The record gives the reactivity of an RNA of 177 nucleotides to 2A3 and DMS.
[RMDB]
RNA sequence: GGGAACGACUCGAGUAGAGUCGAAAAGAUAUGGACAAUGCUACCCACCAGGACGGGACCAAUGAUGUCUUCGUGUCGGAAACGACACGAAGAUUGAGGUCCCUGUCCUGAGGCAUUGUCCUAAGUCCAUUAUGUAUGUGUUCGCACAUACAUAAUGAAAAGAAACAACAACAACAAC
Reactivity to 2A3 in 0.01 (KOAc 150mM, MgCl2 10mM, bicine 150mM(pH8.5), 24C), signal-to-noise 7, nucleotides 027 to 126: g140a100u280a180u300g000g000a000c000a010a000u010g000c010u160a300c010c020c030a020c020c000a010g000g010a010c010g000g000g000a000c010c000a070a300u270g080a050u190g090u010c000u010u000c000g000u000g000u000c000g020g020a060a080a070c000g000a000c000a000c000g010a000a000g000a000u010u010g010a000g000g000u060c040c000c000u010g000u000c000c000u000g000a000g000g000c000a000u000u010g000u010c000c000u000a020a010g060u030c050
Reactivity to DMS in 0.01 (KOAc 150mM, MgCl2 10mM, bicine 150mM(pH8.5), 24C), signal-to-noise 9, nucleotides 027 to 126: g020a160u010a130u000g010g010a020c000a000a010u000g000c010u000a150c030c010c030a300c100c010a000g000g000a020c020g010g010g010a010c010c000a190a240u010g000a110u000g010u000c000u000u000c000g020u000g010u000c000g010g000a130a080a270c010g010a000c000a000c000g000a000a000g000a010u000u000g000a130g010g000u000c000c000c000u010g020u000c000c000u000g000a020g010g000c010a010u000u000g000u000c000c000u000a010a100g010u010c110

Reactivities are given for positions 27 through 126.
2A3 adducts were read by reverse transcription with SuperScript II with manganese.
The RNA was probed in 150 mM KOAc, 10 mM MgCl2 and 150 mM bicine (pH 8.5) at 24 C.